[RMDB]
RNA sequence: GGGAACGACUCGAGUAGAGUCGAAAAGUCAUAAAAUGCAGGACAGCAUCUUCAAUCUGUUGACCGAGGAACAGCUUCGGGGUCGCAACACGCUCAAGUGGAACUAUUUCGGGCCCGAUGUAGUGCCUGCCCACACUUGGUUCGCCAAGUGUGGGCAAAAAGAAACAACAACAACAAC
Reactivity to 2A3 in 0.01 (KOAc 150mM, MgCl2 10mM, bicine 150mM(pH8.5), 24C), signal-to-noise 1, nucleotides 027 to 126: g000u050c000a010u030a070a230a300a000u110g000c000a040g000g060a000c000a000g000c000a000u040c170u000u130c140a130a300u000c030u000g030u100u120g170a250c000c040g030a030g000g000a260a080c080a080g030c000u000u000c030g130g000g040g090u010c000g000c000a060a060c110a000c000g030c000u210c040a240a060g100u010g000g080a060a030c000u040a180u120u220u220c010g010g000g010c000c000c000g000a000u000g030u070a040g030u040g010c080c000